[RMDB]
This 207-nucleotide RNA was probed chemically with 2A3 and DMS. The RNA was probed in 150 mM KOAc, 10 mM MgCl2 and 150 mM bicine (pH 8.5) at 24 C. For 2A3, 1,672 sequencing reads were counted. It was measured as part of the RMDB library M2RFPK.

RNA sequence: GGGAACGACUCGAGUAGAGUCGAAAAUUUCAUCCCCUGAUCAAGGAUGCCCGAAACGGUGAGGCGGAAAGCAAAUUAAAUAACGUCAACCCAUCGGGACGGUUGGCCAGUUAAGAAGUGAGGAUUCAAAAGAUCGAACCGUUCGCGGUUCGAUCAAUCGUAGGACUAAGUUCGCUUAGUCCUACGAAAAAGAAACAACAACAACAAC
Reactivity to 2A3 in 0.01 (KOAc 150mM, MgCl2 10mM, bicine 150mM(pH8.5), 24C), signal-to-noise 3, nucleotides 027 to 156: u050u090u050c000a010u030c010c000c000c000u030g030a080u100c010a030a030g040g010a060u070g040c010c000c000g020a060a080a020c110g000g010u020g020a080g050g020c040g000g050a170a100a030g090c170a070a120a040u140u180a030a060a100u120a090a010c000g010u010c000a010a020c000c000c000a030u050c020g020g020g010a000c020g060g000u000u010g010g010c020c040a060g030u070u090a110a060g060a080a040g050u100g100a020g020g090a080u020u140c060a080a050a030a040g000a000u000c000g000a000a000c000c000g000u030u040c190g010c000g110g040u000u000c010g000a000u000c000a000a000
Reactivity to DMS in 0.01 (KOAc 150mM, MgCl2 10mM, bicine 150mM(pH8.5), 24C), signal-to-noise 1, nucleotides 027 to 156: u010u000u010c100a060u000c000c000c000c000u000g030a130u000c060a100a110g030g020a100u000g000c030c010c000g000a040a160a100c080g050g010u010g030a070g030g010c020g010g020a060a180a050g030c140a110a090a210u010u000a060a100a160u000a120a060c060g010u010c020a020a010c050c010c020a250u010c040g010g020g030a140c080g000g000u010u000g040g040c030c020a130g030u000u010a020a030g000a100a080g010u000g010a140g010g000a100u000u000c120a050a080a060a160g000a030u000c020g000a030a010c010c010g030u010u000c300g000c010g010g000u000u010c000g010a000u010c010a010a010